[RMDB]
RNA sequence: GGGAACGACUCGAGUAGAGUCGAAAACAGGUGCAAACUUAACUAUCGAACAGAUUCUUAAUAUACUAAAUGCAUCAGAUGCGGAAAAUAUUUCUACGAACUAUACUGUUUCUGUUCCAGGUACAUACACAGGGCACGAGUUCGCUCGUGCCCUGUGAAAAGAAACAACAACAACAAC
Reactivity to 2A3 in 0.01 (KOAc 150mM, MgCl2 10mM, bicine 150mM(pH8.5), 24C), signal-to-noise 2, nucleotides 027 to 126: c000a000g140g000u000g000c000a160a010a200c110u080u070a050a090c100u070a090u230c020g000a000a020c000a000g000a100u080u180c000u100u020a230a000u040a040u070a080c150u120a160a070a000u160g000c040a000u000c000a000g060a210u070g020c010g050g080a050a010a110a040u190a230u000u040u050c060u100a130c050g020a000a000c020u000a060u100a210c070u130g010u000u000u000c030u030g030u000u000c010c000a000g030g050u040a060c010a070u120a110

Chemical mapping of a 177-nucleotide RNA with 2A3. The reactions ran in a buffer of 150 mM KOAc, 10 mM MgCl2 and 150 mM bicine (pH 8.5), at 24 C. Reactivities are given for positions 27 through 126. It was measured as part of the RMDB library OK1LIB.